[RMDB]
RNA sequence: GGGAACGACUCGAGUAGAGUCGAAAACCGCAUGCCCAGGUGGCCGCGAUCUUCAAGGCUACGGCGCGGAAAGGUCCGCGCUGAUCGUUUUCCUCCAACGACGCUAUGGCGUCUUUCCUUCACCCGCAAAAUCGUCUCCCGUUCGCGGGAGACGAAACCACAUAUGCUACUUCGGUAGCAUAUGUGGAAAAGAAACAACAACAACAAC
Reactivity to 2A3 in 0.01 (KOAc 150mM, MgCl2 10mM, bicine 150mM(pH8.5), 24C), signal-to-noise 1, nucleotides 027 to 156: c010c000g070c080a050u110g060c010c030c020a030g040g010u010g000g000c000c010g130c040g030a020u000c020u050u040c050a040a000g030g000c010u020a010c030g010g000c010g000c010g010g090a200a240a070g120g150u020c030c000g000c000g000c030u010g010a020u000c010g020u020u150u130u060c010c030u000c010c040a020a090c080g000a000c000g090c040u150a120u300g080g020c020g010u010c050u010u000u000c010c000u040u070c000a050c000c000c020g050c070a010a020a050a260u030c010g010u000c000u010c000c000c000g000u030u010c160g010c010g000g000g010a000g000a000c000g000a000a000a000